[RMDB]
RNA sequence: GGGAACGACUCGAGUAGAGUCGAAAAGGGGAUAGUAGACAGCCUUGACGGACACCACUUGAGGUUGUAAAAUCAUAUGACAGUUCGAUUGGUAGUGUUCGAGUAAAGAGCCUUCACAAGGUUUAUGGAGUCCUCAUUUAUUCGUAAAUGAGGACUCAAAAGAAACAACAACAACAAC
Reactivity to 2A3 in 0.01 (KOAc 150mM, MgCl2 10mM, bicine 150mM(pH8.5), 24C), signal-to-noise 5, nucleotides 027 to 126: g040g020g000g000a060u060a040g110u050a040g050a090c030a000g010c000c010u070u100g060a040c040g000g020a010c020a020c020c000a040c040u050u070g060a040g060g010u050u040g010u040a070a160a030a040u120c060a040u060a100u180g080a030c020a020g050u110u180c060g020a090u030u090g090g000u060a050g030u040g050u060u030c010g030a030g050u100a030a090a020g070a010g040c020c000u080u090c050a030c080a130a050g090g020u000u100u070a150u200g060
Reactivity to DMS in 0.01 (KOAc 150mM, MgCl2 10mM, bicine 150mM(pH8.5), 24C), signal-to-noise 4, nucleotides 027 to 126: g000g000g000g000a100u020a060g000u010a070g000a070c170a130g010c010c020u010u010g010a210c080g000g000a030c050a040c030c050a040c040u000u050g000a140g000g000u000u000g000u000a060a070a080a080u040c140a120u000a070u000g000a050c060a040g000u020u020c030g010a070u020u010g000g010u020a070g040u000g010u010u000c000g020a120g000u030a060a030a140g030a050g000c030c020u000u000c220a090c220a100a060g000g000u000u000u000a060u030g010